[RMDB]
RNA sequence: GGGAACGACUCGAGUAGAGUCGAAAAUAGAAGACAGAUGGAGCUCUAGGCACAGUACUAAUUACAGAGACAGCACAGGUAAAAUGUUGACAGGGAAAGUAGUAACCAAGUUUACCCACUGGUUGGAUACUUUCUUGUCCUGUGUUGUGAGUGCCAACCCAUCAAAGACUUUCGAGUCUUUGAUGGGAAAAGAAACAACAACAACAAC
Reactivity to 2A3 in 0.01 (KOAc 150mM, MgCl2 10mM, bicine 150mM(pH8.5), 24C), signal-to-noise 1, nucleotides 027 to 156: u140a010g060a140a040g030a070c040a040g080a070u140g040g050a030g050c050u060c080u150a080g010g000c030a000c000a030g050u050a030c040u140a090a040u120u060a050c030a030g050a020g040a190c000a010g000c040a000c000a000g010g030u110a060a190a050a120u130g040u120u130g020a010c050a030g000g000g150a000a020a060g010u030a010g040u010a000a000c000c010a120a030g030u040u130u150a150c000c030c040a020c030u000g010g000u020u020g020g030a070u040a010c000u000u000u000c000u000u020g010u090c000c010u000g000u000g000u030u010g000u000g000a000g000u000g010c010c000a000a020
Reactivity to DMS in 0.01 (KOAc 150mM, MgCl2 10mM, bicine 150mM(pH8.5), 24C), signal-to-noise 1, nucleotides 027 to 156: u030a060g000a150a140g030a140c080a040g030a170u000g030g010a080g010c030u000c080u010a090g020g010c010a060c020a160g000u010a140c060u020a090a170u000u000a150c090a160g010a160g050a130c030a020g000c040a010c000a020g000g040u010a060a060a080a110u010g010u010u000g030a140c100a130g010g040g000a020a000a020g000u000a060g000u000a010a030c010c010a020a140g000u000u000u010a120c110c110c180a140c040u000g040g010u000u010g000g020a300u000a010c010u010u000u010c000u000u010g000u000c010c010u000g010u010g010u000u010g000u020g000a030g010u010g000c020c000a060a300

Overview
Conditions: 150 mM KOAc, 10 mM MgCl2 and 150 mM bicine (pH 8.5), 24 C. This 207-nucleotide RNA was probed chemically with 2A3 and DMS. DMS adducts were read by reverse transcription with MarathonRT. For 2A3 the reverse transcriptase was SuperScript II with manganese. The DMS profile rests on 1,907 reads. In probing experiments dimethyl sulfate is read out at A N1 and C N3, which are open when not base-paired. It was measured as part of the RMDB library OK3TST.